[RMDB]
RNA sequence: GGGAACGACUCGAGUAGAGUCGAAAAGAUACAACCGUAGACGGCGUCUCGUUUCAAAGACCGUGUGGUUGUCUAUCAGUAUAUACUCAUUGUGUUUUUCAAAAAAUCUCUGGGUUGUUUAGAUGCCUGACAUUACGACGUUCGCGUCGUAAUGUCAAAAAGAAACAACAACAACAAC
Reactivity to DMS in 0.01 (KOAc 150mM, MgCl2 10mM, bicine 150mM(pH8.5), 24C), signal-to-noise 1, nucleotides 027 to 126: g010a100u000a030c000a020a040c010c040g000u000a210g000a020c050g030g000c130g010u000c040u020c080g000u000u020u000c160a170a000a110g000a210c000c000g010u030g010u000g000g000u000u010g000u030c130u040a030u000c020a080g100u010a020u020a040u000a030c000u000c010a080u000u000g000u010g020u000u000u000u020u150c290a000a020a010a040a040a010u000c080u000c000u010g020g000g000u000u000g000u000u020u000a080g000a050u000g000c300c020
Reactivity to 2A3 in 0.01 (KOAc 150mM, MgCl2 10mM, bicine 150mM(pH8.5), 24C), signal-to-noise 1, nucleotides 027 to 126: g070a050u070a000c050a000a010c040c000g040u120a030g040a300c000g080g000c020g000u100c030u020c120g230u140u230u190c170a180a110a000g000a010c000c000g000u000g070u190g020g000u000u000g010u000c000u010a040u000c000a000g110u050a040u060a000u130a170c030u030c050a100u100u000g010u000g010u080u050u010u000u200c210a210a050a000a000a000a000u060c000u000c000u000g050g000g000u010u010g060u000u040u150a230g010a040u070g010c020c010
Structure probing data (DMS and 2A3) for a 177-nucleotide construct. For 2A3, 350 sequencing reads were counted. Conditions: 150 mM KOAc, 10 mM MgCl2 and 150 mM bicine (pH 8.5), 24 C.